[RMDB]
RNA sequence: GGGAACGACUCGAGUAGAGUCGAAAAGAUAUGGAUUGUGGAAGGCAACAGCUACCGUAUCGGAAACGAUACGUAGACAUGCCUCCCACAAUCCUAAGUCAAACCUAGUCAUGUUCGCAUGACUAGGGACAUGUAGCAUCUUCGGAUGCUACAUGUCAAAAGAAACAACAACAACAAC
Reactivity to 2A3 in 0.01 (KOAc 150mM, MgCl2 10mM, bicine 150mM(pH8.5), 24C), signal-to-noise 7, nucleotides 027 to 126: g010a000u020a010u060g000g000a000u000u000g010u010g010g030a020a020g020g000c150a300a040c080a300g010c010u010a010c070c240g020u000a000u000c000g010g000a030a020a000c000g000a000u000a000c010g000u000a010g000a010c060a110u300g000c000c010u010c000c000c000a000c000a000a000u010c000c000u000a000a000g000u000c010a050a040a140c010c000u010a000g000u000c010a010u020g010u080u140c300g030c200a000u010g000a010c000u000a000g010g010
Reactivity to DMS in 0.01 (KOAc 150mM, MgCl2 10mM, bicine 150mM(pH8.5), 24C), signal-to-noise 6, nucleotides 027 to 126: g010a030u000a190u010g000g000a010u000u000g040u000g010g020a020a010g020g020c000a100a080c240a170g000c000u000a010c180c230g040u000a000u000c000g000g010a070a030a100c000g000a010u000a000c010g010u000a010g000a010c070a300u000g000c010c000u010c000c000c000a010c010a000a000u000c000c000u000a000a050g000u000c010a100a110a300c000c000u000a000g000u000c000a000u000g010u000u010c280g030c000a000u000g000a010c000u000a010g000g000